[RMDB]
RNA sequence: GGGAACGACUCGAGUAGAGUCGAAAAGGCCUGAAGAAUGGCUUCUCUGUUUACAACACACCCAAGAAGAAUCUGGGACCAUUGUAAUGAGGGGCACAAGCAGUUCCCUCUCUGUGAAUGGAUCCCCACGUAGCCCAAUGUUCGCAUUGGGCUACGUAAAAGAAACAACAACAACAAC
Reactivity to 2A3 in 0.01 (KOAc 150mM, MgCl2 10mM, bicine 150mM(pH8.5), 24C), signal-to-noise 2, nucleotides 027 to 126: g040g000c000c000u020g090a080a000g080a100a070u120g000g000c000u070u020c000u000c030u030g180u060u100u080a040c030a120a000c000a000c000a070c010c000c010a010a010g020a030a000g010a150a070u080c170u220g000g010g000a050c040c040a030u020u040g070u160a130a120u140g040a000g000g000g040g000c000a000c000a130a200g160c160a050g020u160u190c040c000c000u000c000u000c000u050g120u010g040a000a000u000g000g090a210u000c000c000c000c000
Reactivity to DMS in 0.01 (KOAc 150mM, MgCl2 10mM, bicine 150mM(pH8.5), 24C), signal-to-noise 2, nucleotides 027 to 126: g000g020c000c010u000g000a070a160g010a130a100u050g000g020c000u030u000c070u000c000u000g000u030u070u010a020c110a130a050c070a050c100a190c000c020c020a150a150g000a080a130g000a000a000u010c130u000g000g000g000a100c030c030a050u010u000g000u020a030a090u020g000a020g000g000g000g070c300a030c070a170a080g010c170a070g000u010u000c080c000c000u000c000u000c000u000g000u000g020a030a030u000g000g000a050u000c000c020c000c300